An RNA of 177 nucleotides, treated with DMS and 2A3 and read out base by base. DMS adducts were read by reverse transcription with MarathonRT. The reactions ran in a buffer of 150 mM KOAc, 10 mM MgCl2 and 150 mM bicine (pH 8.5), at 24 C.
RNA sequence: GGGAACGACUCGAGUAGAGUCGAAAAUUGCACCUACCAAUUAUAUCGGAAGAUUUUGAAGUCAUAGUUUUCCUAUCGUAGUGUGCAAUAAAAACCGUUCUACUGCCACACGGGUACUGGCCUUGAAGGUAAUUGAACAGUUCGCUGUUCAAUUACCAAAAGAAACAACAACAACAAC
Reactivity to DMS in 0.01 (KOAc 150mM, MgCl2 10mM, bicine 150mM(pH8.5), 24C), signal-to-noise 1, nucleotides 027 to 126: u020u000g000c030a010c010c020u000a000c000c180a180a090u030u000a060u000a050u010c200g050g000a030a020g030a000u000u000u000u000g010a300a170g010u040c030a030u000a010g020u000u000u000u000c000c020u000a040u000c180g000u000a000g000u020g030u010g010c000a000a000u000a070a060a060a040a130c090c020g000u000u020c030u010a070c130u000g010c050c090a040c210a180c080g030g000g010u010a000c100u000g000g000c000c040u000u010g060a140a060
Reactivity to 2A3 in 0.01 (KOAc 150mM, MgCl2 10mM, bicine 150mM(pH8.5), 24C), signal-to-noise 1, nucleotides 027 to 126: u000u000g030c010a000c010c000u010a000c030c030a080a050u300u090a170u070a030u270c020g020g020a010a000g020a010u000u130u110u150g220a270a050g140u300c030a040u050a030g000u040u010u000u020c020c000u030a050u100c020g000u020a000g020u020g010u000g300c000a000a010u010a000a030a000a000a010c000c010g000u000u000c030u060a140c050u040g020c030c020a040c000a020c080g000g000g060u040a060c050u060g060g030c000c000u060u090g050a150a020